[RMDB]
RNA sequence: GGGAACGACUCGAGUAGAGUCGAAAACUGGUCUAGUUCGCUAGACCAGAAAAAGCGUACUACCGAAGAGGGAGAACUACUUGGUCUCCCAAAUAGGAGAUUCAAGCUCCUACCCACCUUCGGUAUCGCAAAAAAACGUAUCGUUCGCGAUACGUAAGUGGUUAGGACAGUUCGCUGUCCUAACCACAAAAGAAACAACAACAACAAC
Reactivity to 2A3 in 0.01 (KOAc 150mM, MgCl2 10mM, bicine 150mM(pH8.5), 24C), signal-to-noise 1, nucleotides 027 to 156: c000u000g010g010u000c000u000a010g000u050u060c300g020c130u000a000g000a000c030c010a020g000a000a060a000a000a000g040c010g000u030a120c110u000a000c030c000g030a040a000g000a010g020g100g100a000g110a050a000c010u170a020c000u120u020g010g000u020c000u000c060c000c050a000a000a020u190a000g040g000a000g000a000u250u300c070a120a000g030c000u080c030c040u080a180c020c020c000a080c020c000u000u000c000g030g000u000a050u050c010g000c000a000a000a000a280a000a000a000c040g000u020a000u010c000g000u000u010c300g010c000g180a030u080a010c000g050u050a130a080
Record summary:
The record gives the reactivity of an RNA of 207 nucleotides to 2A3. The data come from the RNA Mapping Database (RMDB), library RNAMAK. The RNA was probed in 150 mM KOAc, 10 mM MgCl2 and 150 mM bicine (pH 8.5) at 24 C. Reactivities are given for positions 27 through 156.